[RMDB]
RNA sequence: GGGAACGACUCGAGUAGAGUCGAAAAUUUGACUAGUGAAAUGAAGGUCAAAAUUGCUGAUACAGCAAGAUACUCUUUAAAACAAAAUCCAAAUCAGGAUAAGGCUGAAGUCAUCGAAAGAUGCCGUAUCGCCGUGUAUGCAGAGUUUUUUGUAGCAAUCUUCUCUUUCUUUCGAGAAAGAGAAGAUAAAAGAAACAACAACAACAAC
Reactivity to DMS in 0.01 (KOAc 150mM, MgCl2 10mM, bicine 150mM(pH8.5), 24C), signal-to-noise 2, nucleotides 027 to 156: u000u000u000g010a060c000u020a170g030u000g000a140a160a170u030g020a140a300g000g020u000c000a030a020a070a120u010u000g040c000u000g000a120u000a130c120a190g000c020a030a020g000a080u000a080c030u000c010u000u000u000a040a060a130a120c030a080a050a120a060u000c020c020a040a110a190u000c160a090g030g000a050u010a080a080g010g040c010u020g010a090a140g010u010c020a010u000c040g000a190a170a220g000a070u000g020c100c000g000u010a060u000c040g000c010c010g000u000g020u000a090u030g040c240a030g000a090g000u000u000u000u010u000u000g010u000a130g020c090a100
Reactivity to 2A3 in 0.01 (KOAc 150mM, MgCl2 10mM, bicine 150mM(pH8.5), 24C), signal-to-noise 3, nucleotides 027 to 156: u010u010u040g010a020c010u040a080g150u070g190a100a150a160u150g070a170a070g040g000u020c000a020a010a050a070u070u020g000c020u040g030a230u150a260c070a020g010c010a020a010g010a020u030a050c000u000c000u020u150u200a070a120a020a020c070a020a140a010a030u000c010c000a040a060a300u130c050a080g000g010a010u040a110a100g010g010c060u050g020a020a000g030u020c000a000u010c010g050a030a050a090g000a000u000g000c010c010g070u070a070u110c020g010c010c010g020u000g040u020a080u130g100c090a010g030a000g040u000u010u010u010u060u100g060u020a040g040c020a020